Structure probing data (DMS and 2A3) for a 177-nucleotide construct. For DMS, 2,320 sequencing reads were counted. 2A3 adducts were read by reverse transcription with SuperScript II with manganese. For 2A3, 4,359 sequencing reads were counted. DMS adducts were read by reverse transcription with MarathonRT. The RNA was probed in 150 mM KOAc, 10 mM MgCl2 and 150 mM bicine (pH 8.5) at 24 C.

RNA sequence: GGGAACGACUCGAGUAGAGUCGAAAAGAACGCAUCGGAAAACUACACACACAGAGGAACCACGAUGCGGAAAGGUAAGAUUGUCAGUCAUGAAAAACGGAAACGGAAUGUCUGACAUGUGUGUGUAGGGUAUCCUAAUCUUCGGAUUAGGAUACCCAAAAGAAACAACAACAACAAC
Reactivity to DMS in 0.01 (KOAc 150mM, MgCl2 10mM, bicine 150mM(pH8.5), 24C), signal-to-noise 2, nucleotides 027 to 126: g000a270a100c000g000c000a000u010c070g000g000a100a070a120a200c040u000a030c000a000c000a020c060a050c000a050g000a210g020g000a070a080c030c070a090c000g000a010u000g010c030g000g000a070a090a080g000g020u000a080a030g020a070u020u040g000u000c000a010g100u000c010a000u000g020a090a010a100a090a200c010g000g000a140a150a160c030g000g020a120a020u000g000u000c000u000g000a000c000a010u000g000u000g020u000g000u000g010u000a000
Reactivity to 2A3 in 0.01 (KOAc 150mM, MgCl2 10mM, bicine 150mM(pH8.5), 24C), signal-to-noise 5, nucleotides 027 to 126: g080a050a020c000g000c000a000u010c010g080g070a020a080a050a140c000u020a000c000a000c000a000c000a010c000a020g090a060g280g120a060a040c040c030a120c060g000a010u000g000c020g010g040a130a040a000g070g020u130a100a040g020a240u080u090g000u000c020a000g000u000c000a010u050g160a160a070a110a070a010c080g050g040a110a060a010c000g020g120a150a020u020g010u000c000u020g000a000c000a010u000g000u000g000u000g000u000g010u000a020